[RMDB]
RNA sequence: GGGAACGACUCGAGUAGAGUCGAAAAGGUGCGGAAAGCAUCAGGGUUGGCUGUAUAGAUUCUGGAUAUACCAAAUCUAGAGGUGCGGAUGUAGUAGUUUGAGGAGCCAAUACUCAGAUUAAGAGCCGCUAUAGUGGUAUUUCGAUACCACUAUAGCAAAAGAAACAACAACAACAAC
Reactivity to 2A3 in 0.01 (KOAc 150mM, MgCl2 10mM, bicine 150mM(pH8.5), 24C), signal-to-noise 6, nucleotides 027 to 126: g030g000u050g020c020g100g180a290a120a070g010c000a020u030c040a020g090g000g000u060u070g030g000c020u030g020u140a060u030a070g020a010u030u040c080u160g000g010a050u080a010u050a300c030c000a020a030a000u000c010u010a020g010a030g010g050u180g040c060g030g010a070u090g040u100a090g040u020a030g010u030u060u070g080a040g010g020a020g030c020c010a000a010u060a050c020u020c040a010g010a080u090u080a130a020g040a040g140c070c110
Reactivity to DMS in 0.01 (KOAc 150mM, MgCl2 10mM, bicine 150mM(pH8.5), 24C), signal-to-noise 7, nucleotides 027 to 126: g020g010u000g010c030g010g010a130a080a130g000c020a030u000c020a130g000g000g020u000u010g010g000c020u000g010u020a120u000a040g000a020u010u010c150u010g010g010a260u030a100u040a200c060c060a030a040a020u010c010u000a030g000a130g000g020u020g000c070g000g000a080u000g010u020a080g010u020a050g010u000u010u000g000a020g000g000a080g010c050c080a040a080u030a070c030u010c030a040g010a070u010u020a050a110g010a130g030c150c140
Conditions: 150 mM KOAc, 10 mM MgCl2 and 150 mM bicine (pH 8.5), 24 C. Chemical mapping of a 177-nucleotide RNA with 2A3 and DMS. DMS adducts were read by reverse transcription with MarathonRT. It was measured as part of the RMDB library OK1LIB.